[RMDB]
The record gives the reactivity of an RNA of 207 nucleotides to DMS and 2A3. DMS adducts were read by reverse transcription with MarathonRT. The RNA was probed in 150 mM KOAc, 10 mM MgCl2 and 150 mM bicine (pH 8.5) at 24 C.

RNA sequence: GGGAACGACUCGAGUAGAGUCGAAAAGUGUGAAGUGAGUCUCCCACUUACGAGCACGAAUUACAUGGGAGUGUUAACAUUACUGGGCGCCAGGAGCCCUACCUGGACAAGUAGCGAAGUACAGCCCGUGUAUGAGCUACGACUAAUUACGGGCACAGGUCGACUAAUACUUCGGUAUUAGUCGACCAAAAGAAACAACAACAACAAC
Reactivity to DMS in 0.01 (KOAc 150mM, MgCl2 10mM, bicine 150mM(pH8.5), 24C), signal-to-noise 1, nucleotides 027 to 156: g000u000g000u000g000a200a160g000u000g020a000g000u000c020u000c110c020c040a300c040u000u000a070c000g050a300g050c000a050c090g000a150a080u000u020a060c090a100u000g010g060g000a140g030u000g060u000u010a100a170c040a060u000u000a110c030u000g020g000g030c040g020c030c040a040g030g010a070g010c020c010c060u000a030c010c000u000g000g000a120c120a050a110g010u000a070g000c000g040a070a140g020u030a010c010a010g030c050c010c010g000u000g060u000a040u000g000a300g020c020u000a030c110g020a190c040u000a020a070u000u000a110c090g010g010g050c060a060c070a070
Reactivity to 2A3 in 0.01 (KOAc 150mM, MgCl2 10mM, bicine 150mM(pH8.5), 24C), signal-to-noise 2, nucleotides 027 to 156: g020u040g010u030g040a040a060g030u000g010a040g030u000c030u020c050c020c020a030c030u020u000a010c040g020a010g010c010a000c060g010a120a170u160u130a140c150a180u090g000g040g000a060g010u110g200u160u130a180a150c140a120u060u200a060c080u050g020g020g020c040g040c000c010a000g000g020a030g060c000c000c000u010a020c010c000u000g040g000a060c020a050a000g000u000a000g010c010g080a100a010g000u020a000c030a040g030c030c000c050g040u010g000u030a020u150g060a010g000c010u060a030c010g050a010c020u000a030a060u080u080a040c080g000g000g020c050a000c020a030